[RMDB]
RNA sequence: GGGAACGACUCGAGUAGAGUCGAAAAAUAGGCUUAUCAAGAGAGGUGGAGGGACUGGCUCGAUGAAACCCGGCAGCCAGAAAUGGUGCCAACUCCUGCAGCGGAAACGUUGAAAGAUGAGCCGAUGCACGCGUUAGCUUCGGCUAACGCAAAAGAAACAACAACAACAAC
Reactivity to 2A3 in 0.01 (KOAc 150mM, MgCl2 10mM, bicine 150mM(pH8.5), 24C), signal-to-noise 7, nucleotides 027 to 129: a000u150a040g010g010c000u010u010a010u030c050a090a020g150a020g010a020g160g040u070g020g030a060g020g050g030a020c010u020g030g000c010u050c060g070a100u190g090a080a040a050c020c000c000g000g000c030a020g040c000c000a000g030a010a080a010u140g040g000u080g020c000c000a010a030c020u010c000c010u040g010c010a010g000c020g000g010a030a020a030c020g000u000u050g050a140a060a010g010a020u050g010a000g000c000c000g010a040u150g010c030a040c080
Reactivity to DMS in 0.01 (KOAc 150mM, MgCl2 10mM, bicine 150mM(pH8.5), 24C), signal-to-noise 3, nucleotides 027 to 129: a120u020a080g030g010c050u020u010a100u020c010a050a010g000a100g030a040g050g000u040g010g000a080g000g000g000a160c090u050g000g000c030u090c000g060a050u040g000a060a060a110c010c000c020g040g040c140a040g040c030c000a000g040a110a070a100u050g040g030u010g040c050c030a060a040c080u010c000c010u040g010c000a020g000c020g030g030a050a040a040c030g000u000u000g020a040a120a130g020a000u050g020a020g040c050c000g040a070u000g020c100a070c210
This 170-nucleotide RNA was probed chemically with 2A3 and DMS. The DMS profile rests on 18,951 reads. It was measured as part of the RMDB library 15KLIB. High 2A3 reactivity points to a flexible backbone, as in loops and unpaired stretches. High DMS reactivity at an A or C suggests that its Watson-Crick edge is free. The reactions ran in a buffer of 150 mM KOAc, 10 mM MgCl2 and 150 mM bicine (pH 8.5), at 24 C.